An RNA of 177 nucleotides, treated with DMS and 2A3 and read out base by base. The reactions ran in a buffer of 150 mM KOAc, 10 mM MgCl2 and 150 mM bicine (pH 8.5), at 24 C.
RNA sequence: GGGAACGACUCGAGUAGAGUCGAAAAGAUAUGGAGGACGACGAGGAUCUGCUGGUCGGAAACGACCAGGCAGGGAGUCGCUCCUAAGUCAAACCCCAUUAAACACGUUCGCGUGUUUAAUGGGGAACAUUCCAGCGGUGUUCGCACCGCUGGAAUGAAAAGAAACAACAACAACAAC
Reactivity to DMS in 0.01 (KOAc 150mM, MgCl2 10mM, bicine 150mM(pH8.5), 24C), signal-to-noise 1, nucleotides 027 to 126: g020a050u000a300u000g000g010a060g000g000a160c040g000a050c000g010a090g010g000a090u010c000u000g000c000u000g000g000u010c010g000g000a080a050a170c000g000a000c010c010a030g030g000c010a000g000g000g000a090g000u000c000g030c040u000c000c000u020a040a150g000u000c030a100a080a280c000c000c000c000a010u000u000a000a000a000c000a000c000g000u030u010c200g040c000g010u000g020u000u000u000a000a000u000g000g000g000g000a000a040
Reactivity to 2A3 in 0.01 (KOAc 150mM, MgCl2 10mM, bicine 150mM(pH8.5), 24C), signal-to-noise 1, nucleotides 027 to 126: g030a000u100a050u280g060g040a050g080g090a080c060g000a010c000g090a260g140g000a050u010c000u010g000c040u010g020g000u000c010g000g000a010a070a000c020g000a020c000c030a040g140g080c010a000g010g000g010a000g020u000c000g000c020u000c000c020u020a140a030g010u050c050a040a000a300c020c010c000c000a000u010u000a000a000a000c000a000c010g030u070u100c300g020c010g180u000g000u000u000u010a010a000u020g010g000g000g000a000a000

2A3 adducts were read by reverse transcription with SuperScript II with manganese.